Chemical mapping of a 177-nucleotide RNA with DMS and 2A3. DMS adducts were read by reverse transcription with MarathonRT. Reactivities are given for positions 27 through 126. The reactions ran in a buffer of 150 mM KOAc, 10 mM MgCl2 and 150 mM bicine (pH 8.5), at 24 C. For DMS, 5,274 sequencing reads were counted. Reactivities are rounded to 0.1 and cut off at 0 and 3.
RNA sequence: GGGAACGACUCGAGUAGAGUCGAAAAGAUAUGGAAUUAGUCACAGCAUACAUUCCUUGGACCCCUGCAAGCUUCGGAAACGAAGCUUGCAGGGCUAGGAGGUAUGUCACAGCUAAUUCCUAAGUCACCUUAGAUAUAUCUUCGGAUAUAUCUAAGGAAAAGAAACAACAACAACAAC
Reactivity to DMS in 0.01 (KOAc 150mM, MgCl2 10mM, bicine 150mM(pH8.5), 24C), signal-to-noise 5, nucleotides 027 to 126: g020a070u000a300u000g000g000a030a010u000u000a020g000u000c030a230c300a300g000c000a010u000a010c000a060u010u000c000c000u000u010g030g020a140c300c020c000c010u000g020c000a010a000g010c000u010u000c000g000g000a090a100a190c020g030a040a020g000c000u010u000g010c000a000g000g000g000c000u000a010g010g010a030g000g020u000a000u000g000u000c050a130c300a300g000c010u000a000a010u000u000c000c010u000a010a080g010u010c040a140
Reactivity to 2A3 in 0.01 (KOAc 150mM, MgCl2 10mM, bicine 150mM(pH8.5), 24C), signal-to-noise 4, nucleotides 027 to 126: g010a010u100a070u220g000g000a010a010u010u020a030g120u210c020a040c030a110g030c010a000u020a020c020a200u140u100c010c000u030u060g300g090a300c060c020c010c010u000g050c010a010a010g020c010u020u010c020g050g060a090a080a090c020g000a010a020g010c010u010u000g030c030a000g000g000g000c000u000a000g000g000a000g010g010u010a010u020g090u120c020a010c000a020g000c000u000a010a010u000u040c000c000u010a150a010g050u030c020a050